[RMDB]
RNA sequence: GGGAACGACUCGAGUAGAGUCGAAAAUGUGCGAGCACCUCUACAUUCUGUGUCGCUUUCCAAAGCAAGAGGGCGACCGUAGCGUUGAUGAGACUUGUGUUACGAAAAUGAAGCAAGGCUCGCAAGAGUCGUUCGAGCUAUUCGUAGCUCGAGCGACAAAAGAAACAACAACAACAAC
Reactivity to 2A3 in 0.01 (KOAc 150mM, MgCl2 10mM, bicine 150mM(pH8.5), 24C), signal-to-noise 9, nucleotides 027 to 126: u220g020u040g000c010g000a000g010c010a030c030c000u010c020u040a040c020a040u070u020c040u100g160u050g010u080c000g000c000u000u000u000c040c030a170a080a050g130c070a100a040g020a010g010g010g000c000g000a000c000c020g030u050a020g040c040g070u030u090g070a140u120g010a030g030a070c020u030u030g040u030g050u140u080a040c040g070a080a050a070a140u130g010a030a000g000c020a000a010g060g000c000u000c000g000c000a010a020g050a010
Reactivity to DMS in 0.01 (KOAc 150mM, MgCl2 10mM, bicine 150mM(pH8.5), 24C), signal-to-noise 9, nucleotides 027 to 126: u040g020u020g010c000g000a020g010c000a300c150c010u000c000u020a140c080a060u010u020c040u020g030u040g000u000c000g020c000u010u010u000c010c070a090a120a180g050c300a120a100g000a010g000g000g000c020g000a010c010c020g010u020a020g010c140g000u000u010g010a130u020g000a060g010a300c040u000u000g010u010g000u010u010a050c050g020a050a050a230a130u030g000a060a190g010c030a020a020g000g010c000u000c000g000c000a060a040g000a160
Conditions: 150 mM KOAc, 10 mM MgCl2 and 150 mM bicine (pH 8.5), 24 C. An RNA of 177 nucleotides, treated with 2A3 and DMS and read out base by base. 2A3 adducts were read by reverse transcription with SuperScript II with manganese. For DMS the reverse transcriptase was MarathonRT. The data come from the RNA Mapping Database (RMDB), library OK1LIB.